The data come from the RNA Mapping Database (RMDB), library OK1LIB.
Structure probing data (2A3 and DMS) for a 177-nucleotide construct.
High 2A3 reactivity points to a flexible backbone, as in loops and unpaired stretches.
For DMS, 3,848 sequencing reads were counted.

RNA sequence: GGGAACGACUCGAGUAGAGUCGAAAAUACAAUAGGAAGAAGCACCAACUCUCCUUCAACCCUCACGAGCUUCGGAGUGCCACCGCUGGAAUGAUCAGAAUGUUGGAAGACGCCGGCCUAACUCAAGAACGACGAUAAGUUUCGACUUAUCGUCGUUAAAAGAAACAACAACAACAAC
Reactivity to 2A3 in 0.01 (KOAc 150mM, MgCl2 10mM, bicine 150mM(pH8.5), 24C), signal-to-noise 3, nucleotides 027 to 126: u240a030c030a040a070u070a120g070g070a070a100g070a150a010g070c030a010c060c000a070a110c000u000c000u010c020c000u040u060c030a080a100c000c000c020u000c030a040c050g030a030g000c010u030u060c000g050g010a000g020u070g000c050c010a060c000c000g020c050u040g000g030a140a120u100g060a060u070c040a010g120a140a080u080g010u170u090g060g000a010a010g050a020c040g020c000c000g030g030c000c030u060a080a060c010u010c070a020a060g040
Reactivity to DMS in 0.01 (KOAc 150mM, MgCl2 10mM, bicine 150mM(pH8.5), 24C), signal-to-noise 3, nucleotides 027 to 126: u040a080c110a070a040u060a100g020g000a070a040g030a130a080g000c030a080c050c070a050a150c090u010c060u020c010c030u000u000c020a080a090c010c040c010u010c040a050c040g000a120g010c070u000u010c030g000g000a130g010u030g000c000c000a070c050c060g020c000u010g000g000a080a080u030g000a110u010c080a030g010a050a050u020g020u040u000g010g000a070a090g000a080c090g020c060c010g000g000c020c000u000a040a090c040u000c080a040a110g000